An RNA of 207 nucleotides, treated with 2A3 and read out base by base. Values cover nucleotides 27 to 156. For 2A3 the reverse transcriptase was SuperScript II with manganese. The reactions ran in a buffer of 150 mM KOAc, 10 mM MgCl2 and 150 mM bicine (pH 8.5), at 24 C. The 2A3 profile rests on 1,478 reads.
[RMDB]
RNA sequence: GGGAACGACUCGAGUAGAGUCGAAAAACCUUUGUGUGCAGGUCUUACUUGUCAGCUCGAUAUGUAGAGCCCAUUGGGCUUGAAAUCGAGCUUGGAUUUAGUAAGAAACCUGCACACUCUGGUAAAAUCAUGCGUAGCUCUUCGGAGCUACGCAUGAGCCAUUAUCUGUGUUCGCACAGAUAAUGGCAAAAGAAACAACAACAACAAC
Reactivity to 2A3 in 0.01 (KOAc 150mM, MgCl2 10mM, bicine 150mM(pH8.5), 24C), signal-to-noise 2, nucleotides 027 to 156: a000c010c020u000u040u010g000u000g010u000g030c010a000g030g000u020c010u030u000a000c000u000u000g040u020c000a010g000c000u000c000g000a020u020a050u210g040u040a000g000a000g040c000c000c000a300u260u300g010g000g000c060u080u080g010a070a010a060u010c010g000a010g000c000u030u020g010g000a010u230u150u140a120g000u110a000a000g020a030a030a020c000c010u010g020c020a000c000a000c000u000c000u000g000g010u040a100a030a000a110u070c000a000u000g000c000g000u000a000g000c000u000c000u030u040c230g060g000a000g000c010u000a010c000g020c000a000u000g000a000